[RMDB]
Structure probing data (2A3 and DMS) for a 177-nucleotide construct. For 2A3 the reverse transcriptase was SuperScript II with manganese. As a SHAPE reagent, 2A3 marks flexible, mostly unpaired nucleotides at the ribose 2'-OH. Values cover nucleotides 27 to 126.
RNA sequence: GGGAACGACUCGAGUAGAGUCGAAAAGAUAUGGAGAUACAGCGCUCGAUAAGUCCCAUUCGGAAACGAAUGAAGGACUUUUGACGAGCGGUAUCUCCUAAGUCAAAGACUUUCUUCGGAAAGUCAAGUUUGCGAUAUACUUCGGUAUAUCGCAAACAAAAGAAACAACAACAACAAC
Reactivity to 2A3 in 0.01 (KOAc 150mM, MgCl2 10mM, bicine 150mM(pH8.5), 24C), signal-to-noise 1, nucleotides 027 to 126: g010a000u060a020u100g000g000a010g010a000u020a010c020a230g300c050g000c070u000c070g230a250u100a300a010g000u030c030c000c000a010u020u000c010g050g030a010a030a030c020g010a010a000u060g040a100a160g000g000a010c000u020u050u120u220g300a240c060g010a010g000c030g020g010u000a000u000c000u000c000c000u000a010a000g020u000c020a000a040a150g020a020c020u020u000u000c040u070u060c220g170g000a000a010a000g000u000c020a040a000
Reactivity to DMS in 0.01 (KOAc 150mM, MgCl2 10mM, bicine 150mM(pH8.5), 24C), signal-to-noise 1, nucleotides 027 to 126: g010a030u000a230u000g010g010a010g000a050u000a010c000a110g000c070g020c000u000c010g030a160u010a030a020g020u010c020c000c000a000u000u000c000g020g000a030a040a070c000g000a020a010u000g010a130a190g020g010a010c010u010u010u000u020g030a280c090g030a010g020c010g000g000u000a000u000c000u000c000c000u000a000a020g000u010c010a150a130a090g010a020c000u000u010u010c000u000u010c300g060g000a010a020a000g010u000c010a070a140